RNA sequence: GGGAACGACUCGAGUAGAGUCGAAAAGCUCAGUUCGCUGAGCAAAAAGCGUACUACCUCGAGGUAGAGGAGUGCCAACUUGUAUCCCAAAUAGGAUACAAGGACGUAUACUCUCUACUACCCACCGAGGUAUCGCAAAAAUCUCGUUCGCGAGAAAUGUAGGUAGUACCUUCGGGUACUACCUACAAAAAGAAACAACAACAACAAC
Reactivity to 2A3 in 0.01 (KOAc 150mM, MgCl2 10mM, bicine 150mM(pH8.5), 24C), signal-to-noise 1, nucleotides 027 to 156: g000c000u000c000a070g020u170u150c120g040c030u000g000a000g020c000a000a030a030a030a030g040c040g000u050a120c090u000a040c000c000u000c030g000a070g010g000u000a000g000a020g030g000a000g000u000g050c030c000a030a000c010u000u000g000u000a000u110c000c030c000a250a270a000u210a200g030g020a000u000a000c000a000a020g000g000a000c020g000u020a020u000a190c000u000c000u080c000u230a300c000u000a000c080c000c050a050c110c000g010a000g000g000u000a000u000c000g010c000a010a010a010a000a010u000c000u000c000g000u040u180c300g000c000g080a060g000a100a110a150